RNA sequence: GGGAACGACUCGAGUAGAGUCGAAAACAAUAGACUAGGCGUAGUGGCGAAAAACGGCCUGAUAGGGUGCUGCAGAGGCCCACUACUAGGCUAGUAUAAAAUUCUCUGCAGCAUAAACGUCAACAAACGAGGUAUAGUACUUCGGUACUAUACCUCGAAAAGAAACAACAACAACAAC
Reactivity to 2A3 in 0.01 (KOAc 150mM, MgCl2 10mM, bicine 150mM(pH8.5), 24C), signal-to-noise 3, nucleotides 027 to 126: c020a020a090u140a190g130a050c010u020a020g030g040c010g000u000a000g030u010g030g020c060g130a100a000a000a060a050c020g050g000c000c010u050g020a040u130a120g140g010g020u020g010c000u000g000c000a000g000a000g000g040c020c010c000a000c000u010a020c020u010a050g110g000c010u000a010g020u000a050u110a170a080a010a000u170u030c000u000c000u010g000c000a000g000c000a000u050a030a110a000c080g040u080c040a010a030c010a090a140a010
Reactivity to DMS in 0.01 (KOAc 150mM, MgCl2 10mM, bicine 150mM(pH8.5), 24C), signal-to-noise 2, nucleotides 027 to 126: c050a130a090u060a080g030a000c040u000a010g000g000c040g000u010a030g000u000g000g000c300g000a120a090a060a090a050c030g000g030c050c000u000g000a160u070a110g000g010g020u000g000c000u000g010c000a000g000a010g010g030c140c010c020a050c050u000a000c010u020a080g010g000c050u020a010g000u000a050u020a010a050a050a050u000u060c000u000c000u000g000c050a010g000c030a000u010a040a010a110c070g020u000c110a030a040c220a030a050a160